Record summary: Source: RMDB library OK3TST, as collected in RNAgym. This 207-nucleotide RNA was probed chemically with 2A3. For 2A3 the reverse transcriptase was SuperScript II with manganese. The 2A3 profile rests on 336 reads.

[RMDB]
RNA sequence: GGGAACGACUCGAGUAGAGUCGAAAAAGGACUUGAAUAUAUCUUUUUGGGAGCCACAAUUCAACCCAUAACACUAAGUCACUCAGCAUGGUUCCCAGCAUGGAAUCGAUUUUCACUGAAUGACAGCUGUCAGUCAUUACCCUUUGGAACCAGUCAACGUGCCCUACCGGUUCGCCGGUAGGGCACGAAAAGAAACAACAACAACAAC
Reactivity to 2A3 in 0.01 (KOAc 150mM, MgCl2 10mM, bicine 150mM(pH8.5), 24C), signal-to-noise 1, nucleotides 027 to 156: a000g020g000a030c050u070u060g010a110a010u180a030u040a040u220c040u110u040u130u150u150g040g050g000a070g050c050c010a030c180a090a070u220u170c050a150a120c000c020c000a020u060a100a130c080a000c110u010a030a120g020u010c050a050c110u050c080a040g020c070a050u090g010g000u000u020c030c060c010a010g000c030a030u090g060g030a100a010u150c100g060a100u110u050u060u080c060a010c000u040g060a030a070u150g020a060c000a030g050c200u110g060u110c030a000g000u000c000a020u000u070a050c000c000c000u000u010u050g030g000a030a010c030c020a000g040u130c140a130a000